[RMDB]
RNA sequence: GGGAACGACUCGAGUAGAGUCGAAAAACAACCAGCUUUUCUCCGCUCGUCCUCCGCGAGAUGAUCACACACAGACUCAAAUUUGACCCAAGCAACUACCUCAACUGUGACCUUGAUCGGUCGGACAUCUGGGAAUAGGUUUCGACCUAUUCCCAGAAAAAGAAACAACAACAACAAC
Reactivity to 2A3 in 0.01 (KOAc 150mM, MgCl2 10mM, bicine 150mM(pH8.5), 24C), signal-to-noise 6, nucleotides 027 to 126: a000c070a020a050c020c010a000g000c020u050u050u060u010c030u000c010c010g030c040u030c020g060u040c020c010u050c020c030g020c030g040a050g010a080u120g030a040u070c010a020c000a000c000a000c010a070g060a150c050u030c140a070a140a140u140u120u120g050a110c000c000c000a050a010g010c010a040a080c040u120a080c010c020u050c020a060a090c040u090g070u110g100a020c000c010u030u000g060a030u060c010g000g020u010c030g000g010a030c040a070
Reactivity to DMS in 0.01 (KOAc 150mM, MgCl2 10mM, bicine 150mM(pH8.5), 24C), signal-to-noise 2, nucleotides 027 to 126: a090c140a080a170c060c060a090g000c020u000u000u000u000c030u000c030c050g010c020u000c050g000u020c050c040u000c040c010g020c140g020a130g010a080u000g010a090u010c050a100c060a070c110a030c030a090g010a090c030u000c090a010a120a070u020u010u000g040a110c030c010c010a030a060g040c090a040a120c090u030a080c080c030u000c050a060a050c100u010g040u000g000a050c040c010u000u000g000a020u020c110g010g000u000c000g010g020a130c150a100